The record gives the reactivity of an RNA of 207 nucleotides to 2A3. Source: RMDB library OK3TST, as collected in RNAgym. As a SHAPE reagent, 2A3 marks flexible, mostly unpaired nucleotides at the ribose 2'-OH.
[RMDB]
RNA sequence: GGGAACGACUCGAGUAGAGUCGAAAACUAAUAUAAGUGUUCUGAGCACAUAGGCUGGACUAAGAUGUGAUGCUGGGUAGGUUAGGUGUAUUCAAUGCAUUUUCAGCUCCUGAUAUUUCCAACUUACUAUGGGUUUAUCAGAUGUAGCCAACAUCAACACUGAGGUGAGGUUCGCCUCACCUCAGUGAAAAGAAACAACAACAACAAC
Reactivity to 2A3 in 0.01 (KOAc 150mM, MgCl2 10mM, bicine 150mM(pH8.5), 24C), signal-to-noise 1, nucleotides 027 to 156: c040u040a050a220u170a100u050a250a050g040u040g020u120u000c020u060g050a020g090c000a030c050a090u080a100g030g000c000u040g020g040a050c050u050a010a060g020a150u090g050u030g050a070u120g010c000u050g000g140g030u050a080g040g000u000u060a050g000g080u040g000u030a110u030u200c000a040a010u160g030c060a070u040u030u130u140c060a070g000c000u010c050c000u000g000a000u000a050u040u010u000c000c000a050a080c140u100u080a050c050u170a200u150g040g010g000u030u010u000a050u050c020a000g010a080u020g020u020a020g020c050c000a000a110c000a050u090c000a000a090